The record gives the reactivity of an RNA of 177 nucleotides to 2A3 and DMS. High DMS reactivity at an A or C suggests that its Watson-Crick edge is free.
RNA sequence: GGGAACGACUCGAGUAGAGUCGAAAAGAUAUGGACAUUCAUUUGAUUCAUCGAUCUCGACUCGGAAACGAGUCGAGGGAGAAUCUGAUGAGAUGUCCUAAGUCAAAGCUAUGCUUCGGCAUAGCAACAAUCUAAGCUCGUUCGCGAGCUUAGAUUGAAAAGAAACAACAACAACAAC
Reactivity to 2A3 in 0.01 (KOAc 150mM, MgCl2 10mM, bicine 150mM(pH8.5), 24C), signal-to-noise 3, nucleotides 027 to 126: g020a030u080a080u220g010g000a000c010a010u040u000c000a000u020u060u130g000a010u030u010c040a210u300c150g040a080u010c020u000c000g000a010c000u010c000g000g000a090a070a020c000g000a000g040u000c010g020a000g000g010g000a010g000a000a010u000c010u020g030a020u020g050a170g040a190u030g000u000c000c000u000a090a020g040u020c050a200a000a070g000c000u010a000u010g010c000u050u150c300g140g000c000a010u010a010g000c000a000a010
Reactivity to DMS in 0.01 (KOAc 150mM, MgCl2 10mM, bicine 150mM(pH8.5), 24C), signal-to-noise 3, nucleotides 027 to 126: g010a060u000a300u010g000g000a000c000a030u020u000c020a010u000u000u000g010a030u000u000c010a300u010c190g010a050u010c000u000c000g000a020c000u000c000g000g000a120a110a170c010g000a010g000u000c000g000a000g000g020g000a020g010a020a010u000c000u000g000a020u000g000a050g010a030u000g000u000c000c000u000a010a080g000u000c070a160a110a170g010c000u000a000u000g010c000u000u010c270g020g000c000a000u000a010g010c000a080a100